[RMDB]
RNA sequence: GGGAACGACUCGAGUAGAGUCGAAAAAUUCCGCUCAGCUCCAUUCUCCCUUCGGGGCUGCAAUGGUUUCGACGGGGCAUAAGGAGGGUGACUGAAGCCUGCUCGGUAAGAGCAAAUCCCGUAACUGUAUCUCGAUGCUAUUCGUAGCAUCGAGAUAAAAAGAAACAACAACAACAAC
Reactivity to DMS in 0.01 (KOAc 150mM, MgCl2 10mM, bicine 150mM(pH8.5), 24C), signal-to-noise 3, nucleotides 027 to 126: a170u020u040c090c090g000c040u010c000a020g000c020u000c010c020a130u000u000c030u010c010c000c010u000u030c050g030g010g020g050c010u000g020c220a150a070u010g020g020u000u000u000c020g040a050c060g070g000g000g000c280a130u010a190a030g000g000a040g010g000g020u000g010a120c030u000g010a060a150g000c000c040u000g000c000u000c000g000g020u010a050a180g000a020g020c040a030a070a170u020c000c000c000g000u020a090a060c080u060g000
Reactivity to 2A3 in 0.01 (KOAc 150mM, MgCl2 10mM, bicine 150mM(pH8.5), 24C), signal-to-noise 2, nucleotides 027 to 126: a000u100u010c030c000g000c050u030c000a010g020c010u000c020c000a050u090u000c030u050c000c000c000u010u030c000g020g000g000g000c010u000g000c010a060a220u290g000g000u020u020u020c020g020a010c000g000g000g080g020c050a170u070a190a050g070g010a000g000g010g050u050g080a160c020u040g020a040a020g000c010c050u000g010c000u000c000g090g030u240a050a080g000a010g010c000a010a010a010u020c000c010c000g010u030a100a040c050u070g010

Background: Structure probing data (DMS and 2A3) for a 177-nucleotide construct. 2A3 adducts were read by reverse transcription with SuperScript II with manganese. The reactions ran in a buffer of 150 mM KOAc, 10 mM MgCl2 and 150 mM bicine (pH 8.5), at 24 C. For 2A3, 1,703 sequencing reads were counted. Reactivities are given for positions 27 through 126.